[RMDB]
RNA sequence: GGGAACGACUCGAGUAGAGUCGAAAAGAUUCCUCGUUGUUGAGCGAGGUUUAAACAAAUCGACCACACAAACGUAGAGCCGACUACGGAUUUAUAAAUUAAGGGAUUAAGUGUGAUAAGGAGACAAAAAACGAUGUUGUGUUCGCACAACAUCGAACCAGAGGAUACCGUUCGCGGUAUCCUCUGGAAAAGAAACAACAACAACAAC
Reactivity to 2A3 in 0.01 (KOAc 150mM, MgCl2 10mM, bicine 150mM(pH8.5), 24C), signal-to-noise 1, nucleotides 027 to 156: g030a120u150u150c000c000u000c000g000u000u020g000u000u020g010a020g000c000g010a020g010g000u000u100u080a020a000a000c010a000a000a010u010c000g000a000c020c000a000c010a020c010a000a160a160c020g000u000a000g040a020g090c000c060g040a050c000u010a000c010g020g000a000u020u300u000a240u050a050a040a040u090u160a000a020g020g010g070a040u080u010a120a120g050u010g000u000g010a020u020a060a080g110g010a060g030a000c090a060a150a010a030a010a000c010g000a000u000g020u000u000g000u010g000u030u050c250g000c100a000c000a000a000c000a000u000c000g000a000a010
Structure probing data (2A3) for a 207-nucleotide construct. It was measured as part of the RMDB library M2RFPK.